[RMDB]
RNA sequence: GGGAACGACUCGAGUAGAGUCGAAAAAAAAGAUAUGGAUGGAUCAGAGCCUCUCCAAUCCUAGACAGCCUGUCGGAAACGACAGGCCGAGAUUGGUGAGGCGACGAAGAUCCAUCCUAAGUCAAAACACUUAACUUUGCUUCGGCAAAGUUAAGUGAAAAGAAACAACAACAACAAC
Reactivity to DMS in 0.01 (KOAc 150mM, MgCl2 10mM, bicine 150mM(pH8.5), 24C), signal-to-noise 1, nucleotides 027 to 126: a160a170a060a060g000a080u000a300u000g000g000a010u000g000g010a000u000c000a030g000a140g040c000c020u000c020u000c000c010a010a010u030c000c300u000a170g040a060c300a170g030c000c000u000g010u000c000g040g000a170a080a180c010g010a040c000a000g010g000c000c000g080a040g000a000u000u000g000g000u010g000a000g000g030c000g010a040c050g010a220a090g000a010u000c000c000a000u000c000c000u000a000a080g000u010c030a080a100a110a090

This 177-nucleotide RNA was probed chemically with DMS. The RNA was probed in 150 mM KOAc, 10 mM MgCl2 and 150 mM bicine (pH 8.5) at 24 C.